[RMDB]
RNA sequence: GGGAACGACUCGAGUAGAGUCGAAAAGGCGUGCCUUUUGCAUAAUGAGCCUACGAGUUGCUCCUCACUAGCAAGAUUAAGACUUUAAGGGUCGUAGUCGAAGCGAAAGCGAGUCUGAAUAGGGCGAAUGUCGUGACCAUUUCGAUGGUCACGACAUAAAAGAAACAACAACAACAAC
Reactivity to 2A3 in 0.01 (KOAc 150mM, MgCl2 10mM, bicine 150mM(pH8.5), 24C), signal-to-noise 2, nucleotides 027 to 126: g110g040c160g040u150g000c010c050u040u130u180u240g110c060a050u160a120a080u210g030a080g000c000c000u000a080c000g050a000g010u000u040g000c000u000c000c000u080c000a010c010u000a070g010c000a030a000g000a000u060u200a080a000g000a050c010u030u000u260a090a090g150g000g000u010c000g000u000a000g020u000c020g120a090a020g020c030g030a030a000a000g050c000g000a080g090u010c050u120g010a070a080u140a190g000g000g000c040g080a080
Reactivity to DMS in 0.01 (KOAc 150mM, MgCl2 10mM, bicine 150mM(pH8.5), 24C), signal-to-noise 1, nucleotides 027 to 126: g000g000c020g090u000g030c000c080u000u020u030u040g050c000a030u000a050a060u000g000a060g000c000c010u020a050c040g000a030g000u000u000g010c020u000c010c010u040c080a140c140u030a230g000c100a070a260g000a080u000u000a000a090g000a010c000u000u030u000a140a080g000g000g010u000c000g000u000a030g000u000c000g000a210a070g000c000g000a110a040a060g020c120g000a080g040u000c110u000g000a120a050u000a030g000g010g010c020g000a280
The record gives the reactivity of an RNA of 177 nucleotides to 2A3 and DMS. It was measured as part of the RMDB library RFM100. For 2A3 the reverse transcriptase was SuperScript II with manganese. Reactivities are given for positions 27 through 126. For DMS, 1,157 sequencing reads were counted. Conditions: 150 mM KOAc, 10 mM MgCl2 and 150 mM bicine (pH 8.5), 24 C.